[RMDB]
RNA sequence: GGGAACGACUCGAGUAGAGUCGAAAACCAAAGAGAGAAAACAACAUCAACAGAUCCUAAAACAAAAUUAGAAACUAGUCACAAAAGAGCCAGACAAAACUUCCAAUAAUUUAUGGGAUUCAAGAUUACUUCGUCUAACUUUCGAGUUAGACGAAGUAAAAGAAACAACAACAACAAC
Reactivity to 2A3 in 0.01 (KOAc 150mM, MgCl2 10mM, bicine 150mM(pH8.5), 24C), signal-to-noise 3, nucleotides 027 to 126: c000c000a000a110a000g180a010g010a010g070a030a110a010a000c080a040a020c030a070u110c050a060a050c010a090g020a000u000c030c010u120a090a110a090a060c090a040a140a050a030u080u060a020g030a030a010a020c050u040a010g020u020c040a000c010a110a230a100a010g050a050g070c080c030a040g020a040c000a000a120a050a070c010u030u000c030c020a050a050u060a110a160u100u060u110a080u130g010g020g010a000u060u000c040a070a000g040a080u000u040